Description: The record gives the reactivity of an RNA of 177 nucleotides to DMS and 2A3. The DMS profile rests on 2,978 reads. For 2A3 the reverse transcriptase was SuperScript II with manganese. Source: RMDB library OK2TRN, as collected in RNAgym.
RNA sequence: GGGAACGACUCGAGUAGAGUCGAAAACAGGCGGCUCACCGAGCGGCGGCGUGAGCUCGAGGAUCUCCUCUCCAAGGAGCGGGACCUCGUACGGGAGCGGGAGCUCCUCGCCCAUGCGGUGGAGGAGCACCCGGUGUCCUUUCGAGGACACCGGGUGAAAAGAAACAACAACAACAAC
Reactivity to DMS in 0.01 (KOAc 150mM, MgCl2 10mM, bicine 150mM(pH8.5), 24C), signal-to-noise 3, nucleotides 027 to 126: c160a150g010g020c080g010g010c030u000c030a060c160c040g000a110g010c080g000g010c030g010g030c090g000u010g000a050g010c030u000c030g000a040g000g000a110u000c010u000c000c010u000c030u010c090c170a120a190g000g010a010g020c230g010g000g000a080c010c000u000c000g020u010a050c130g000g000g010a130g010c050g010g010g010a160g010c000u000c000c000u000c000g000c000c000c020a110u010g010c130g010g000u000g020g010a020g020g010a020g020
Reactivity to 2A3 in 0.01 (KOAc 150mM, MgCl2 10mM, bicine 150mM(pH8.5), 24C), signal-to-noise 2, nucleotides 027 to 126: c050a020g160g050c070g020g000c030u050c070a070c030c060g050a060g060c070g130g060c040g030g000c040g060u070g020a010g020c040u010c010g030a060g040g030a170u010c050u020c030c010u020c040u040c050c000a110a150g110g000a010g020c000g010g020g010a030c000c010u010c000g000u050a040c050g010g020g010a030g020c030g000g000g020a010g040c000u000c020c000u010c010g030c000c000c000a140u300g050c220g020g000u040g120g040a000g000g040a000g000